[RMDB]
RNA sequence: GGGAACGACUCGAGUAGAGUCGAAAACGCGGUAGUCGACCACCUCGCCACACGCCUCGCAGACGCGCUUGUACCGGAUGCGUCCGUUGUCCUUGGCGUGCACCUGGUGGAACCUGAUGUCGUGGUCGCACAUGCUCGAAUUCGUUCGAGCAUGUGCAAAAGAAACAACAACAACAAC
Reactivity to 2A3 in 0.01 (KOAc 150mM, MgCl2 10mM, bicine 150mM(pH8.5), 24C), signal-to-noise 3, nucleotides 027 to 126: c030g000c010g040g040u120a100g150u090c030g020a070c030c000a010c000c000u000c030g070c090c020a030c000a000c010g010c010c020u040c030g050c040a020g000a000c010g010c010g020c030u050u090g170u190a110c020c120g010g120a110u130g010c010g010u020c000c030g100u100u260g050u040c000c060u030u040g000g000c000g000u010g030c000a040c000c000u030g000g000u000g000g050a060a070c010c080u210g020a020u060g040u030c040g000u010g010g080u090c040
Reactivity to DMS in 0.01 (KOAc 150mM, MgCl2 10mM, bicine 150mM(pH8.5), 24C), signal-to-noise 2, nucleotides 027 to 126: c040g000c000g000g000u000a030g010u000c030g010a130c010c030a010c020c070u000c050g050c120c100a170c000a010c010g010c040c000u000c100g030c070a070g010a010c030g000c000g000c040u000u010g010u010a070c170c140g010g020a230u000g000c040g030u000c010c040g040u000u000g040u000c130c090u000u000g010g090c000g010u010g010c300a060c000c020u000g010g020u000g020g010a040a060c070c090u020g000a060u000g000u000c060g030u000g020g010u000c070